[RMDB]
RNA sequence: GGGAACGACUCGAGUAGAGUCGAAAAGGCCAUCGUUUUUACCAGACCAUUUUCGAUGGCCAUAGGUCUGGGUUAUAGUUCAAUCGCCGAGAGGCGUACAGUUAGAGUAGCGAGCUCGAAGCACGCGACCGGUAGGAGCUCGCGAAGGUCGCGGAGAAAUAGGUAAUGACUUCGGUCAUUACCUAUUAAAAGAAACAACAACAACAAC
Reactivity to DMS in 0.01 (KOAc 150mM, MgCl2 10mM, bicine 150mM(pH8.5), 24C), signal-to-noise 3, nucleotides 027 to 156: g020g000c000c010a040u000c020g000u000u010u010u010u000a030c020c000a040g030a040c090c020a220u000u020u000u000c040g020a040u010g030g010c000c010a020u000a030g000g010u000c020u010g020g020g020u000u000a090u000a100g010u020u000c050a120a150u000c030g030c010c000g010a270g010a230g010g030c000g080u000a040c080a110g000u000u000a110g010a150g020u000a120g010c010g020a030g030c000u000c040g010a120a120g020c040a080c010g010c010g000a040c010c000g020g020u000a120g010g010a080g000c040u000c040g030c010g020a060a050g020g020u000c010g040c030g010g000a230g010a090
Reactivity to 2A3 in 0.01 (KOAc 150mM, MgCl2 10mM, bicine 150mM(pH8.5), 24C), signal-to-noise 2, nucleotides 027 to 156: g020g000c000c000a010u000c030g030u020u010u040u100u150a050c040c020a030g070a030c080c000a110u090u040u110u120c020g000a000u010g010g030c000c000a010u030a000g020g000u000c010u040g070g030g000u000u070a150u060a150g060u060u100c050a090a020u040c040g000c020c000g020a030g000a000g070g020c000g030u010a010c020a060g050u070u150a010g010a020g050u040a000g070c030g010a000g040c010u040c050g020a030a000g030c030a010c080g040c010g040a000c000c030g050g010u030a030g130g040a020g040c060u030c090g000c060g000a010a020g000g020u030c000g010c040g040g000a030g030a010
Chemical mapping of a 207-nucleotide RNA with DMS and 2A3. The data come from the RNA Mapping Database (RMDB), library OK3TST. The RNA was probed in 150 mM KOAc, 10 mM MgCl2 and 150 mM bicine (pH 8.5) at 24 C. For 2A3 the reverse transcriptase was SuperScript II with manganese. For 2A3, 804 sequencing reads were counted.